The record gives the reactivity of an RNA of 177 nucleotides to DMS. Conditions: 150 mM KOAc, 10 mM MgCl2 and 150 mM bicine (pH 8.5), 24 C. Reactivities are given for positions 27 through 126. The DMS profile rests on 1,019 reads. DMS adducts were read by reverse transcription with MarathonRT.
RNA sequence: GGGAACGACUCGAGUAGAGUCGAAAAGGCGGGCAGUUUUGCUGUCUGCAAAACGUGUUGGAACUGGAAAGUCUGCAGACGUGCCGAUCCCAGGGGGAGAGGCUGGGGUGAGACCUCUGGGGUCCUACUCAAAAUACCUCUUCGGAGGUAUUUUGAGAAAAGAAACAACAACAACAAC
Reactivity to DMS in 0.01 (KOAc 150mM, MgCl2 10mM, bicine 150mM(pH8.5), 24C), signal-to-noise 1, nucleotides 027 to 126: g000g010c000g020g010g030c060a070g000u000u000u010u010g000c030u000g020u040c040u000g020c030a030a010a060a060c050g000u000g030u000u000g010g000a080a080c050u010g020g000a150a160a130g000u000c050u000g010c060a080g000a030c010g040u000g010c110c110g000a090u020c000c010c000a100g000g000g020g000g010a130g000a110g000g020c130u000g000g000g020g000u020g010a130g000a140c010c000u000c010u000g010g000g020g010u000c000c100u010a100